Structure probing data (2A3) for a 207-nucleotide construct. Conditions: 150 mM KOAc, 10 mM MgCl2 and 150 mM bicine (pH 8.5), 24 C.

RNA sequence: GGGAACGACUCGAGUAGAGUCGAAAAGGGAUGGGGUCCGAAGCCCCAUUGAGGGAUAAUACAGGCUCUCCCAUCCAACUCCUAUUCCAACACGUCCUCGUCGUACAGAGUGGUAACAUGUGUCACCUAUACUAAUGACCGUUCGCGGUCAUUAGAAGUUCGGAUGAUAGUUCGCUAUCAUCCGAACAAAAGAAACAACAACAACAAC
Reactivity to 2A3 in 0.01 (KOAc 150mM, MgCl2 10mM, bicine 150mM(pH8.5), 24C), signal-to-noise 2, nucleotides 027 to 156: g040g000g000a000u010g000g000g000g000u000c000c010g000a060a000g010c010c000c000c000a050u070u210g030a240g000g000g000a030u040a220a040u160a300c150a080g010g000c030u040c060u060c020c000c010a000u000c000c000a080a110c050u000c000c020u040a090u090u000c010c040a020a020c000a010c080g020u030c020c000u030c020g110u030c020g060u150a100c040a030g030a020g090u050g000g010u110a060a040c030a090u190g050u030g100u060c030a070c100c010u040a050u050a210c000u000a000a000u000g000a000c000c000g000u020u040c200g050c010g000g000u000c000a000u000u000a000g010a020a020
For 2A3, 883 sequencing reads were counted.